[RMDB]
Structure probing data (DMS and 2A3) for a 177-nucleotide construct. The RNA was probed in 150 mM KOAc, 10 mM MgCl2 and 150 mM bicine (pH 8.5) at 24 C. Values cover nucleotides 27 to 126. For DMS the reverse transcriptase was MarathonRT. As a SHAPE reagent, 2A3 marks flexible, mostly unpaired nucleotides at the ribose 2'-OH.

RNA sequence: GGGAACGACUCGAGUAGAGUCGAAAACUUUAGUAGAUGAGUUGUUAAAACAAUCUGGUAUAUUCAGAGAAAAUGAACAUGUCGAUGAACGUGCAAUGGACUCUAACGAUAUCGAAAGAGAGCGUGGUCUCAUAACAGUAUUCGUACUGUUAUGAGAAAAAGAAACAACAACAACAAC
Reactivity to DMS in 0.01 (KOAc 150mM, MgCl2 10mM, bicine 150mM(pH8.5), 24C), signal-to-noise 9, nucleotides 027 to 126: c080u000u000u000a090g020u000a050g010a080u000g000a150g030u000u000g010u010u010a070a070a080a060c060a110a090u000c010u000g010g010u010a040u000a070u010u010c130a010g000a070g000a040a100a100a040u000g000a060a180c060a030u000g010u000c030g010a110u010g010a070a050c100g020u000g010c080a150a040u000g000g000a270c030u010c030u000a060a200c110g000a030u000a050u000c010g000a090a080a160g000a030g000a090g000c060g010u000g000g010
Reactivity to 2A3 in 0.01 (KOAc 150mM, MgCl2 10mM, bicine 150mM(pH8.5), 24C), signal-to-noise 8, nucleotides 027 to 126: c010u090u100u110a090g070u070a020g080a140u070g080a060g100u010u030g040u070u210a060a110a010a030c020a020a040u000c020u030g000g050u070a090u030a030u150u090c030a000g020a000g040a040a050a020a050u070g010a050a030c020a030u040g000u030c050g200a260u150g070a120a020c030g000u010g000c030a030a060u040g020g020a030c010u000c000u040a060a000c040g030a020u060a160u120c010g020a030a040a020g040a010g010a020g070c030g030u060g040g050